[RMDB]
RNA sequence: GGGAACGACUCGAGUAGAGUCGAAAAAAUAUAAGGGUAAGUUUGUCCAAAUCCCUGCUCAGUGUGUCCGUGACCCUGUGGGAUUUUGUUUGUCAAAUACCCCCUGUAAUGUCUGUCAAUAUUGGAUACGCACGACCGUUCGCGGUCGUGAAAAGAAACAACAACAACAAC
Reactivity to DMS in 0.01 (KOAc 150mM, MgCl2 10mM, bicine 150mM(pH8.5), 24C), signal-to-noise 3, nucleotides 027 to 129: a060a070u040a100u030a060a070g010g000g020u020a040a120g030u010u020u030g000u040c050c020a010a020a010u010c040c020c000u030g020c080u040c060a000g000u050g000u000g020u020c040c030g030u040g000a000c030c050c050u030g000u030g020g020g010a000u050u020u010u030g020u030u060u080g030u030c020a040a030a030u060a300c090c050c000c000c000u010g040u020a050a060u060g010u000c100u030g000u000c060a030a110u010a110u010u000g030g000a040u000a060c150g010
Reactivity to 2A3 in 0.01 (KOAc 150mM, MgCl2 10mM, bicine 150mM(pH8.5), 24C), signal-to-noise 3, nucleotides 027 to 129: a000a000u300a010u030a000a050g000g000g020u010a010a010g000u070u050u050g000u010c000c000a000a000a000u040c000c000c000u020g050c070u020c050a050g030u000g000u030g010u170c020c060g120u110g050a020c030c000c000u020g020u080g010g070g000a060u040u000u010u060g030u070u130u060g050u010c000a010a000a020u070a020c000c000c060c000c000u050g030u000a090a150u100g050u030c060u000g100u120c060a060a050u110a090u260u210g100g020a040u030a120c040g000